An RNA of 170 nucleotides, treated with 2A3 and DMS and read out base by base.

RNA sequence: GGGAACGACUCGAGUAGAGUCGAAAAGUCAUGAAUAUGGAUGUUAGUCUCCAUAGACAUAGGCUCUCUCUUAAGGAGUUGAUGAUGUAUGCCGCUGAUCCAGCCAUGCACAUUGCCUCCUCUAACGCAACUUUGAACUUCGGUUCAAAGAAAAGAAACAACAACAACAAC
Reactivity to 2A3 in 0.01 (KOAc 150mM, MgCl2 10mM, bicine 150mM(pH8.5), 24C), signal-to-noise 9, nucleotides 027 to 129: g010u000c000a000u000g010a020a010u010a000u000g000g030a020u100g120u250u230a140g080u110c020u000c020c000a000u000a000g010a030c000a010u040a110g010g000c000u000c010u000c000u000c000u050u120a050a020g010g000a000g000u020u010g010a010u000g030a050u010g010u000a000u010g120c140c070g000c040u030g050a300u150c150c010a000g000c000c000a000u000g000c000a010c000a010u000u000g000c000c000u000c010c000u010c020u050a070a040c090g030c140a050a130
Reactivity to DMS in 0.01 (KOAc 150mM, MgCl2 10mM, bicine 150mM(pH8.5), 24C), signal-to-noise 9, nucleotides 027 to 129: g010u020c000a030u000g000a040a090u010a000u010g030g030a000u070g050u070u060a150g040u080c110u040c000c020a000u000a030g020a250c000a050u030a050g020g040c020u020c070u030c030u030c000u070u080a110a030g010g000a000g020u000u000g030a010u000g000a100u020g030u000a000u000g020c160c170g040c020u020g010a190u070c180c030a010g000c040c030a010u000g030c020a050c020a020u010u000g010c190c000u010c010c000u030c110u040a030a050c160g040c190a050a070
For DMS, 64,048 sequencing reads were counted.
DMS (dimethyl sulfate) methylates the pairing face of unpaired adenines and cytosines.
Reactivities are given for positions 27 through 129.